About this RNA:
This 207-nucleotide RNA was probed chemically with 2A3. Values cover nucleotides 27 to 156. The reactions ran in a buffer of 150 mM KOAc, 10 mM MgCl2 and 150 mM bicine (pH 8.5), at 24 C. Source: RMDB library M2RFPK, as collected in RNAgym.
[RMDB]
RNA sequence: GGGAACGACUCGAGUAGAGUCGAAAAGAACUUUGGCCGGCUCGGAAUAGAAUCAGGGGGUGCAAACUGCCCACUGGCAGAAAGGAUUAUAACAAAUGCGUACCCUAUUGCAAUACAGCCCGGCCAACAUAGACUACUCUAUUCGUAGAGUAGUCAACACCGUGUAGCAGUUCGCUGCUACACGGUGAAAAGAAACAACAACAACAAC
Reactivity to 2A3 in 0.01 (KOAc 150mM, MgCl2 10mM, bicine 150mM(pH8.5), 24C), signal-to-noise 1, nucleotides 027 to 156: g050a110a000c010u040u000u020g000g000c000c000g010g000c010u040c070g030g060a090a120u170a230g080a050a110u100c110a100g030g000g000g000g010u060g010c010a000a000a220c000u000g020c000c000c150a160c180u160g000g030c020a000g140a040a150a030g110g000a040u040u100a090u100a090a100c090a060a120a080u090g030c000g000u010a000c000c000c000u020a090u020u080g190c050a010a030u080a120c030a030g040c020c030c000g000g000c000c000a000a000c000a020u070a000g000a000c000u000a010c000u000c000u000a020u010u020c150g020u000a000g000a000g010u000a000g000u000c000a000a000